Structure probing data (2A3 and DMS) for a 177-nucleotide construct. For 2A3 the reverse transcriptase was SuperScript II with manganese. Reactivities are given for positions 27 through 126. Conditions: 150 mM KOAc, 10 mM MgCl2 and 150 mM bicine (pH 8.5), 24 C. It was measured as part of the RMDB library RFM100. The DMS profile rests on 2,387 reads.
RNA sequence: GGGAACGACUCGAGUAGAGUCGAAAAUAGGUGGGCAGUUUGGGUGGGGCGCCACUCCCCCGAAAAGGUAUCGGGGGAGCCCAAAGGUCGGCUCAGGCGGGUCAGAAAUCCGCCGUAGAGUGCAAGGUUCGUCUGUACAGUUCGCUGUACAGACGAAAAAAGAAACAACAACAACAAC
Reactivity to 2A3 in 0.01 (KOAc 150mM, MgCl2 10mM, bicine 150mM(pH8.5), 24C), signal-to-noise 1, nucleotides 027 to 126: u100a000g040g010u050g030g040g080c080a140g010u150u150u110g060g000g030u090g000g000g020g000c000g030c000c000a050c000u000c000c000c060c000c000g060a000a000a000a080g220g080u140a130u100c020g000g000g000g000g000a000g000c000c000c000a020a060a000g000g000u070c000g020g060c000u000c000a000g000g000c000g000g000g050u030c050a040g010a100a190a000u000c000c000g020c080c000g000u000a000g000a000g060u030g070c060a070a040g110g000
Reactivity to DMS in 0.01 (KOAc 150mM, MgCl2 10mM, bicine 150mM(pH8.5), 24C), signal-to-noise 2, nucleotides 027 to 126: u090a070g000g000u010g010g000g030c020a080g000u030u000u030g000g000g040u020g060g000g000g020c050g020c070c060a250c010u000c000c000c010c040c000g000a010a160a090a140g040g040u050a100u000c000g000g020g030g060g000a000g040c080c050c020a030a020a120g000g000u010c130g000g000c000u000c000a280g020g000c010g000g000g000u000c070a090g050a140a110a040u000c000c010g000c000c000g000u000a020g000a030g020u010g010c100a110a070g010g000